[RMDB]
RNA sequence: GGGAACGACUCGAGUAGAGUCGAAAAGUAAUGACGUAAGGUGGGACUUUUCCUUCUGGAACCAAGCGGUUGGUUCCGAGGGGGGUGUGAUCCAGGUACCGCCGUAGAAACUGGAUUACGACGUCUACCCGGGAUUCAAACCCGGUCCCCUCCAGAAGUGUAAGGUGAACUUCGGUUCACCUUACACAAAAGAAACAACAACAACAAC
Reactivity to 2A3 in 0.01 (KOAc 150mM, MgCl2 10mM, bicine 150mM(pH8.5), 24C), signal-to-noise 1, nucleotides 027 to 156: g070u060a020a140u120g010a010c020g020u020a060a000g020g010u090g020g020g020a050c040u090u140u090u060c010c000u030u050c110u170g010g000a010a000c010c010a020a080g110c100g280g030u050u050g020g010u000u000c000c000g010a020g000g000g000g000g000g000u000g010u000g030a000u000c010c010a000g030g000u040a090c010c060g000c000c000g010u050a030g090a030a300a100c030u040g000g010a060u060u010a010c160g010a010c010g020u010c010u010a010c040c000c020g000g000g000a070u220u160c130a140a100a100c010c020c000g000g000u080c030c000c000c000u070c060c020a120g040a300a000